[RMDB]
RNA sequence: GGGAACGACUCGAGUAGAGUCGAAAAGGCGAUUAACGGCAACAGCAAGGUGAUGGUUGCCGACGUCACAGUUGGCUCGAUACGCGCCAUCAACUUGAAGAACUGGGUGGCCACCCUGACUCUGGGACCAUCAUAAAAUGUUCGCAUUUUAUGAUGGAAAAGAAACAACAACAACAAC
Reactivity to 2A3 in 0.01 (KOAc 150mM, MgCl2 10mM, bicine 150mM(pH8.5), 24C), signal-to-noise 9, nucleotides 027 to 126: g030g010c060g060a060u110u160a120a080c040g040g000c020a030a010c010a070g060c010a020a050g020g020u040g020a030u030g020g030u070u190g000c010c000g000a010c020g010u070c030a020c040a120g130u140u060g020g000c010u020c070g050a060u070a210c110g030c010g000c060c000a000u010c010a010a030c010u040u050g040a070a040g030a110a050c050u050g050g060g100u040g110g000c010c010a020c000c010c000u030g040a060c020u010c040u060g020g000g080a070
Reactivity to DMS in 0.01 (KOAc 150mM, MgCl2 10mM, bicine 150mM(pH8.5), 24C), signal-to-noise 9, nucleotides 027 to 126: g010g020c030g000a090u000u010a110a160c070g010g010c020a050a100c160a090g010c020a050a040g000g010u000g010a040u000g000g010u010u010g030c000c000g020a030c090g020u010c200a080c160a170g010u000u000g010g010c000u000c100g000a120u010a090c300g010c170g000c010c000a020u000c010a030a020c030u000u000g000a080a070g010a120a120c060u000g010g000g020u000g010g010c030c040a140c050c010c020u000g000a080c100u010c030u000g010g010g010a300